[RMDB]
Structure probing data (DMS and 2A3) for a 177-nucleotide construct. The 2A3 profile rests on 2,443 reads. It was measured as part of the RMDB library 15KREP. For DMS the reverse transcriptase was MarathonRT.
RNA sequence: GGGAACGACUCGAGUAGAGUCGAAAACGAGGCGAUAACUUCCAUAGUGUCUUAACAACAUUCAUUGACGCAGCACGAGGCCCCGCAGGUGUGGAGUCUGAUGUUGAGACCAAUGAAAUUGUUGACUAGAUUAAGGUUUGUUCGCAAACCUUAAUCUAAAAGAAACAACAACAACAAC
Reactivity to DMS in 0.01 (KOAc 150mM, MgCl2 10mM, bicine 150mM(pH8.5), 24C), signal-to-noise 2, nucleotides 027 to 126: c090g000a090g000g020c040g010a090u000a110a100c110u000u000c040c030a100u000a150g020u000g000u000c010u000u020a080a140c020a010a040c030a070u000u010c020a030u000u000g000a090c030g010c040a070g010c000a010c050g000a040g010g010c000c010c000c010g010c030a200g010g050u000g040u000g010g010a090g010u000c010u000g000a030u010g000u010u000g010a080g020a140c050c000a020a050u000g000a060a020a160u020u000g000u000u000g000a170c220u000
Reactivity to 2A3 in 0.01 (KOAc 150mM, MgCl2 10mM, bicine 150mM(pH8.5), 24C), signal-to-noise 2, nucleotides 027 to 126: c000g010a020g050g000c040g040a040u050a120a060c030u060u010c020c000a060u080a070g140u090g040u000c000u070u070a050a020c000a010a000c000a010u000u010c010a000u000u040g010a010c010g020c050a010g020c000a010c020g070a020g020g010c000c000c000c010g000c050a140g040g300u270g010u020g160g000a020g010u000c000u000g110a150u000g030u010u010g010a030g000a040c040c000a000a000u010g000a030a010a020u100u050g020u010u010g020a040c060u030